[RMDB]
RNA sequence: GGGAACGACUCGAGUAGAGUCGAAAAUGUGUUAAUGGUGUGAAGGCACUGCUACCUUUGACCCUGCCUUGCCUCUCCCCAAGUUUUGAUGAGACGAGAACAUUUUCCAGACUGAUGGGACAUGAAAUCCAUGCAAUAAUUUCGAUUAUUGCAUGGAAAAAGAAACAACAACAACAAC
Reactivity to DMS in 0.01 (KOAc 150mM, MgCl2 10mM, bicine 150mM(pH8.5), 24C), signal-to-noise 9, nucleotides 027 to 126: u010g020u010g010u000u000a060a090u010g010g010u000g010u010g010a120a090g010g000c030a050c070u000g010c070u010a060c030c020u000u000u000g000a110c050c010c040u000g000c080c020u010u000g020c030c010u000c040u000c030c030c020c060a080a110g010u000u000u010u010g010a090u000g000a090g000a060c050g000a100g010a090a110c040a060u000u010u000u000c020c020a100g010a120c150u000g000a080u000g010g000g000a050c080a040u000g000a060a090a120
Reactivity to 2A3 in 0.01 (KOAc 150mM, MgCl2 10mM, bicine 150mM(pH8.5), 24C), signal-to-noise 4, nucleotides 027 to 126: u120g050u010g030u050u080a070a070u140g020g000u030g020u020g100a070a020g040g000c020a010c070u040g020c030u060a100c010c000u040u060u120g060a060c030c010c000u020g040c010c010u010u040g010c020c000u000c020u030c000c020c000c020a050a050g040u010u030u080u160g090a100u080g030a010g010a050c060g020a010g040a130a010c010a030u020u070u040u020c020c000a030g030a070c050u040g010a090u070g030g020g020a010c020a020u070g040a010a020a060